Source information:
An RNA of 177 nucleotides, treated with DMS and read out base by base. For DMS the reverse transcriptase was MarathonRT. Source: RMDB library M2PK90, as collected in RNAgym. In probing experiments dimethyl sulfate is read out at A N1 and C N3, which are open when not base-paired. For DMS, 992 sequencing reads were counted.
RNA sequence: GGGAACGACUCGAGUAGAGUCGAAAAGCAAAGAAAUUUUUUCCCAAUAAGGCGAAGUAAGCAAGUCGACCCAACGCGAGGGCGCUAGCGAGCUUACGAGCCCUAGCAGACUAAUAGCGAGAAAAAAUCUAGGGUAUUACUUCGGUAAUACCCUAGAAAAAGAAACAACAACAACAAC
Reactivity to DMS in 0.01 (KOAc 150mM, MgCl2 10mM, bicine 150mM(pH8.5), 24C), signal-to-noise 2, nucleotides 027 to 126: g040c130a020a040a050g020a070a130a040u000u000u000u000u000u000c000c000c000a140a100u010a100a050g030g010c010g010a080a130g000u010a000a010g010c020a160a180g020u000c070g000a100c070c000c000a040a070c080g050c250g000a070g000g000g000c020g010c200u000a100g000c070g000a290g000c000u000u010a010c020g020a300g000c010c000c030u000a070g040c040a110g000a180c080u000a070a050u000a110g000c070g010a100g000a030a000a060a070a050a070